[RMDB]
Structure probing data (2A3 and DMS) for a 207-nucleotide construct. The reactions ran in a buffer of 150 mM KOAc, 10 mM MgCl2 and 150 mM bicine (pH 8.5), at 24 C. The DMS profile rests on 1,883 reads. It was measured as part of the RMDB library OK3TST.
RNA sequence: GGGAACGACUCGAGUAGAGUCGAAAACAGGAAGGGACGGACCCUGUUGUACCAUGCCAAAGAGUUUGCACAUUUGCAGGUGGAUACCAGGAACCCAUUAUAGGUCAAAAAGAGACACAAGUGACUGGCUAUCCAGCAUGUCCUUAGUACAUCCUGAACGCUGGGUAAAUUUCGAUUUACCCAGCGUAAAAGAAACAACAACAACAAC
Reactivity to 2A3 in 0.01 (KOAc 150mM, MgCl2 10mM, bicine 150mM(pH8.5), 24C), signal-to-noise 1, nucleotides 027 to 156: c010a000g020g000a000a110g000g000g020a000c090g000g100a080c000c000c000u000g010u060u000g000u050a120c060c050a020u030g000c000c080a230a210a040g190a030g000u020u080u060g110c030a040c100a300u160u140u130g000c020a010g000g060u010g000g000a000u000a030c000c000a000g020g010a000a060c000c000c030a010u120u080a100u260a160g030g030u030c030a090a130a050a130a000g190a040g010a030c050a000c000a140a000g010u020g020a060c010u000g040g000c030u020a000u000c010c010a000g000c010a010u020g010u000c040c000u000u000a000g000u080a040c010a080u060c000c060u080g080a080
Reactivity to DMS in 0.01 (KOAc 150mM, MgCl2 10mM, bicine 150mM(pH8.5), 24C), signal-to-noise 1, nucleotides 027 to 156: c040a100g020g020a070a010g030g000g040a050c110g000g030a150c080c030c010u000g010u000u000g000u000a050c110c010a070u010g030c040c060a080a100a190g010a110g000u000u010u000g000c050a090c130a130u000u000u010g020c000a090g000g000u010g020g030a110u000a030c000c000a010g000g000a120a160c030c010c010a220u010u000a220u000a060g010g000u010c070a060a120a070a150a200g020a280g000a080c000a040c040a050a180g030u000g010a140c000u010g010g000c070u000a080u000c010c000a080g010c000a060u010g000u000c010c000u010u000a130g010u000a050c030a140u020c030c010u010g030a200